RNA sequence: GGGAACGACUCGAGUAGAGUCGAAAAGAUAAGGCCCAAUACCGUAGCGGUUUGUCGUCGGAGGUGCAGGUUCACCGUGUGGAGGCUGUGGCCCGUAUUGGCACCACCUAUAAGGGUGGGAAGCGUACACAUCUGGUACAUUCGUGUACCAGAUGUGAAAAGAAACAACAACAACAAC
Reactivity to 2A3 in 0.01 (KOAc 150mM, MgCl2 10mM, bicine 150mM(pH8.5), 24C), signal-to-noise 4, nucleotides 027 to 126: g100a080u140a090a050g090g000c030c010c010a030a030u110a050c040c050g070u070a040g070c060g050g070u030u080u110g090u070c050g020u010c010g040g030a060g030g050u030g010c030a030g060g030u070u070c020a020c070c030g040u060g070u120g120g020a050g030g000c020u020g000u060g080g000c000c010c020g040u080a130u080u110g060g000c020a020c010c010a000c000c010u140a150u070a300a120g090g000g000u020g000g020g010a020a030g030c030g020u100a020
Reactivity to DMS in 0.01 (KOAc 150mM, MgCl2 10mM, bicine 150mM(pH8.5), 24C), signal-to-noise 6, nucleotides 027 to 126: g010a130u020a090a150g010g010c030c010c020a120a090u010a090c060c060g010u010a110g010c070g010g010u010u000u010g010u010c050g030u010c050g010g010a120g000g020u010g020c050a070g000g030u010u010c040a060c050c080g010u000g010u000g010g010a110g010g010c050u000g020u000g020g010c030c010c050g010u000a050u010u010g000g010c060a250c010c000a000c000c010u000a140u010a140a120g010g010g010u000g000g000g010a030a080g010c050g010u000a170
The record gives the reactivity of an RNA of 177 nucleotides to 2A3 and DMS. For DMS the reverse transcriptase was MarathonRT. Source: RMDB library OK2TST, as collected in RNAgym. The RNA was probed in 150 mM KOAc, 10 mM MgCl2 and 150 mM bicine (pH 8.5) at 24 C. The DMS profile rests on 7,268 reads. For 2A3 the reverse transcriptase was SuperScript II with manganese. Reactivities are given for positions 27 through 126. The 2A3 profile rests on 4,033 reads.